[RMDB]
RNA sequence: GGGAACGACUCGAGUAGAGUCGAAAAUGUUAAUGGUUUGGGAUAUACUCAGAGGAUAUGACAUAUACAGUUUCGGAAUUGGGUAUAUCUUCAUGUCAAGGAGAAUUUUUACAUAGAAGUGAGUAAAGAUAGUUUCGGAGUUCGCUCCGAAACUAUCAAAAGAAACAACAACAACAAC
Reactivity to DMS in 0.01 (KOAc 150mM, MgCl2 10mM, bicine 150mM(pH8.5), 24C), signal-to-noise 1, nucleotides 027 to 126: u010g000u060u000a060a020u010g000g000u000u000u000g000g000g000a000u000a000u010a050c020u000c000a010g000a300g000g020a030u000a050u000g000a010c180a180u040a020u040a180c130a150g000u010u000u030c040g000g000a110a050u040u000g000g040g030u000a000u000a000u010c000u030u000c020a000u000g000u040c010a100a090g090g020a080g030a070a060u000u000u000u030u000a060c090a020u010a020g000a090a190g000u000g000a090g000u000a140a000a180
Reactivity to 2A3 in 0.01 (KOAc 150mM, MgCl2 10mM, bicine 150mM(pH8.5), 24C), signal-to-noise 1, nucleotides 027 to 126: u140g000u200u100a050a050u050g000g130u060u030u080g000g000g000a000u000a000u000a080c000u000c000a000g020a010g040g030a000u020a130u150g220a140c060a000u080a050u160a290c050a190g080u040u110u000c090g100g260a100a200u140u060g010g160g000u000a000u000a000u000c000u080u070c000a050u020g000u000c000a000a000g170g020a100g270a000a000u280u080u020u000u000a030c000a000u000a020g080a070a080g190u060g000a030g270u300a050a000a000